[RMDB]
RNA sequence: GGGAACGACUCGAGUAGAGUCGAAAAGAUAUGGAAUAGCUACCCACCGUCUGAACUACAGCCUGAAACAUGUGGUUCGGAAACGAACCACAUGUUUCAGUGCUGCAGACGAGGCUAUUCCUAAGUCGGUGAUAUAAUAGUUCGCUAUUAUAUCACCAAAAGAAACAACAACAACAAC
Reactivity to 2A3 in 0.01 (KOAc 150mM, MgCl2 10mM, bicine 150mM(pH8.5), 24C), signal-to-noise 2, nucleotides 027 to 126: g070a070u300a260u300g000g010a010a020u000a000g000c010u100a300c040c020c000a020c010c000g000u000c010u010g030a070a070c060u160a040c300a000g000c000c000u010g030a010a010a000c000a010u010g000u030g040g010u050u000c050g000g030a110a120a030c030g000a000a000c000c000a000c000a000u000g000u000u000u000c000a000g000u010g000c000u000g000c000a000g000a000c000g000a000g010g000c000u000a020u000u050c000c000u010a100a020g300u290c220
Reactivity to DMS in 0.01 (KOAc 150mM, MgCl2 10mM, bicine 150mM(pH8.5), 24C), signal-to-noise 5, nucleotides 027 to 126: g020a160u010a170u000g000g000a020a000u000a010g020c010u000a150c010c010c020a300c120c000g000u010c000u010g000a060a050c120u010a300c020a000g000c000c000u000g000a010a010a010c010a000u000g030u000g000g020u000u000c000g000g000a030a050a140c000g000a010a020c010c000a010c000a000u000g000u000u000u000c000a000g010u010g010c000u000g000c000a010g010a010c000g000a060g010g000c000u010a010u000u010c000c010u000a010a070g020u000c190

This 177-nucleotide RNA was probed chemically with 2A3 and DMS. For 2A3, 7,949 sequencing reads were counted. For DMS the reverse transcriptase was MarathonRT. The reactions ran in a buffer of 150 mM KOAc, 10 mM MgCl2 and 150 mM bicine (pH 8.5), at 24 C. Source: RMDB library TTRINS, as collected in RNAgym.